[RMDB]
RNA sequence: GGGAACGACUCGAGUAGAGUCGAAAAGAGACGAUGUCGGGCAAGUUCGCCUUGGUCGCGAUAUCGGCGACCUCCAGGCUGAUGGCGCUGCGGCCGACAUAGCGCUUCAUCACCAGAUCGCCGUUCGGCACGUAGCACUGUUCGCAGUGCUACGUGCAAAAGAAACAACAACAACAAC
Reactivity to DMS in 0.01 (KOAc 150mM, MgCl2 10mM, bicine 150mM(pH8.5), 24C), signal-to-noise 1, nucleotides 027 to 126: g000a140g000a040c010g090a040u020g000u040c000g000g040g030c020a020a190g000u000u020c100g040c100c000u000u030g000g000u000c010g030c010g000a300u120a010u070c000g000g050c010g000a000c030c100u000c140c090a120g000g030c070u000g000a060u000g040g000c030g010c060u000g010c150g050g000c050c040g000a160c020a060u050a050g010c000g000c050u010u000c050a000u000c010a100c220c070a100g000a050u000c060g000c000c000g000u000u000c080g000
Reactivity to 2A3 in 0.01 (KOAc 150mM, MgCl2 10mM, bicine 150mM(pH8.5), 24C), signal-to-noise 3, nucleotides 027 to 126: g160a000g010a010c060g040a020u070g020u130c000g030g000g030c050a130a060g060u100u120c110g040c020c010u040u140g070g010u050c020g000c020g080a070u080a070u230c060g110g010c020g010a010c000c020u040c050c040a010g070g000c050u050g010a030u100g050g000c010g000c020u020g030c060g080g000c040c010g000a020c020a010u020a030g000c010g000c000u080u150c010a040u030c020a000c010c000a020g000a100u060c020g020c010c020g050u080u110c000g060